[RMDB]
An RNA of 177 nucleotides, treated with DMS and 2A3 and read out base by base. DMS (dimethyl sulfate) methylates the pairing face of unpaired adenines and cytosines. It was measured as part of the RMDB library TTRDEL.
RNA sequence: GGGAACGACUCGAGUAGAGUCGAAAAGAUAUGGAGUCAGAACUACCAGCGCACAGCCGAAGAACUCGGAAACGAGGGAGGCUGGAUCUGGCUGACUCCUAAGUCAAAACAUCGCUUCGGCGAUGAAUCUUUACCACAGGUUCGCCUGUGGUAAAGAAAAAGAAACAACAACAACAAC
Reactivity to DMS in 0.01 (KOAc 150mM, MgCl2 10mM, bicine 150mM(pH8.5), 24C), signal-to-noise 2, nucleotides 027 to 126: g000a010u000a300u010g040g000a040g010u000c010a010g010a070a020c140u000a300c020c000a000g000c170g030c300a260c050a060g040c020c000g030a150a080g020a110a250c010u000c000g000g000a040a040a180c010g020a010g000g000g020a030g000g000c000u000g020g000a120u000c000u000g000g020c010u000g000a010c010u000c000c020u000a050a030g000u010c110a120a090a070a190c010a000u000c000g010c000u000u000c120g010g030c000g020a030u010g000a090a080
Reactivity to 2A3 in 0.01 (KOAc 150mM, MgCl2 10mM, bicine 150mM(pH8.5), 24C), signal-to-noise 1, nucleotides 027 to 126: g010a000u050a040u140g000g000a000g010u000c010a010g000a150a100c080u130a120c290c000a020g010c010g020c050a060c030a090g030c040c040g170a300a110g050a080a070c010u000c010g000g060a120a100a030c000g030a020g000g000g040a060g030g000c040u000g000g000a040u030c010u000g000g020c000u000g000a010c010u000c000c010u000a020a020g000u000c010a000a000a010a140c010a010u000c020g040c000u050u030c220g180g000c000g000a000u000g000a000a030